[RMDB]
RNA sequence: GGGAACGACUCGAGUAGAGUCGAAAAGAUAUGGAAGAAGCAUCGAUCGUAUGGGUCGGAAACGACCCUACGGGAGCCUCUUCCUAAGUCAAACCCGUGAUAAUGGCUUCGGCCAUUAUCACGGGAACAUAGAUACACCCUUCGGGGUGUAUCUAUGAAAAGAAACAACAACAACAAC
Reactivity to 2A3 in 0.01 (KOAc 150mM, MgCl2 10mM, bicine 150mM(pH8.5), 24C), signal-to-noise 1, nucleotides 027 to 126: g010a020u090a040u170g010g000a000a020g020a010a000g000c000a230u300c030g150a090u070c000g000u030a130u300g000g040g000u000c040g000g020a000a080a010c010g000a000c000c010c000u000a000c010g010g020g000a000g010c010c000u000c010u010u000c000c000u010a140a000g030u000c030a070a040a140c000c020c000g030u010g000a000u020a000a000u000g000g010c010u070u100c300g190g030c030c030a010u020u000a000u010c000a000c000g000g000g020a000a000
Reactivity to DMS in 0.01 (KOAc 150mM, MgCl2 10mM, bicine 150mM(pH8.5), 24C), signal-to-noise 2, nucleotides 027 to 126: g000a050u000a300u010g000g010a000a000g020a020a030g000c010a300u000c180g000a070u000c000g000u010a030u010g020g000g000u000c000g010g010a070a120a200c010g000a000c000c000c000u000a000c010g010g010g000a010g000c010c030u000c050u000u000c000c010u000a010a100g010u000c030a100a070a200c000c010c000g000u000g010a000u000a000a010u010g000g010c000u000u010c190g040g020c000c010a000u010u000a000u000c000a010c000g000g000g000a010a010

This 177-nucleotide RNA was probed chemically with 2A3 and DMS. For DMS the reverse transcriptase was MarathonRT. The 2A3 profile rests on 3,043 reads. The data come from the RNA Mapping Database (RMDB), library TTRDEL. The reactions ran in a buffer of 150 mM KOAc, 10 mM MgCl2 and 150 mM bicine (pH 8.5), at 24 C.